[RMDB]
RNA sequence: GGGAACGACUCGAGUAGAGUCGAAAAGGCACGAAGCCCCCACCGGGCGCUCCCCUCGGCGGGCCGUCCGUUGGGUUCACACCCCCAGGCCGCGGGCCGGCUGCUCUUCUUUCUCUUUCGUCGUCAUCAGGUUACAACUUCGGUUGUAACAAAAGAAACAACAACAACAAC
Reactivity to 2A3 in 0.01 (KOAc 150mM, MgCl2 10mM, bicine 150mM(pH8.5), 24C), signal-to-noise 9, nucleotides 027 to 129: g030g000c050a030c200g120a090a020g010c000c010c000c000c000a010c010c010g000g000g010c010g010c080u190c010c010c000c010u150c100g220g010c120g020g010g010c040c000g000u010c000c000g000u010u030g010g000g000u120u110c040a070c000a040c040c000c000c000c010a040g040g010c010c010g040c050g010g030g010c020c010g020g000c010u040g010c010u000c000u070u020c000u020u140u010c010u000c000u010u050u050c050g020u000c010g020u010c010a080u050c040a080g110
Reactivity to DMS in 0.01 (KOAc 150mM, MgCl2 10mM, bicine 150mM(pH8.5), 24C), signal-to-noise 9, nucleotides 027 to 129: g010g020c050a100c180g050a140a150g000c000c000c000c000c000a000c050c030g020g020g000c040g010c070u070c030c020c000c040u080c130g080g000c130g010g000g010c300c010g020u000c000c000g020u010u010g010g010g030u040u020c100a090c100a260c060c020c000c010c040a090g030g030c030c070g010c030g000g020g000c000c060g010g000c080u000g000c000u000c040u020u030c030u030u000u010c000u000c070u010u000u000c050g030u000c070g010u000c050a090u050c070a100g000
Structure probing data (2A3 and DMS) for a 170-nucleotide construct. The data come from the RNA Mapping Database (RMDB), library 15KLIB. DMS (dimethyl sulfate) methylates the pairing face of unpaired adenines and cytosines. The reactions ran in a buffer of 150 mM KOAc, 10 mM MgCl2 and 150 mM bicine (pH 8.5), at 24 C. DMS adducts were read by reverse transcription with MarathonRT. Reactivities are given for positions 27 through 129.